[RMDB]
RNA sequence: GGGAACGACUCGAGUAGAGUCGAAAACAAGGGCACGCCGAGCUUGAUGUUUUCUUGACAUAAGUCAAAUUGCCAACCUCCACUGGGUGGGUCAAGGUUGAGGUAUAGAAUCCUAUUCGCUCCUGAUAAAUAACUCGAUAUUCGUAUCGAGUUAUUUAAAAGAAACAACAACAACAAC
Reactivity to DMS in 0.01 (KOAc 150mM, MgCl2 10mM, bicine 150mM(pH8.5), 24C), signal-to-noise 9, nucleotides 027 to 126: c080a080a180g000g000g020c020a040c060g010c030c030g010a100g000c030u010u000g010a090u010g000u010u000u000u010c080u010u010g000a040c040a110u010a080a100g010u000c040a030a050a120u020u010g010c030c020a070a080c050c010u010c030c040a050c060u020g010g000g030u010g000g000g010u010c130a070a060g000g020u010u010g000a050g010g010u000a300u010a050g000a070a060u010c020c010u010a100u010u000c060g010c050u000c040c020u000g000a190u000
Reactivity to 2A3 in 0.01 (KOAc 150mM, MgCl2 10mM, bicine 150mM(pH8.5), 24C), signal-to-noise 9, nucleotides 027 to 126: c040a030a080g020g000g000c030a020c060g030c010c010g030a030g020c020u040u060g070a050u080g110u030u050u040u040c060u040u090g020a020c010a070u210a130a060g010u030c020a030a090a130u100u070g040c010c000a020a020c020c010u040c020c010a050c070u120g060g060g060u080g030g010g020u070c050a060a020g020g000u030u030g030a020g010g040u030a070u020a120g090a030a030u020c010c010u030a080u060u090c040g010c030u020c010c010u030g020a030u020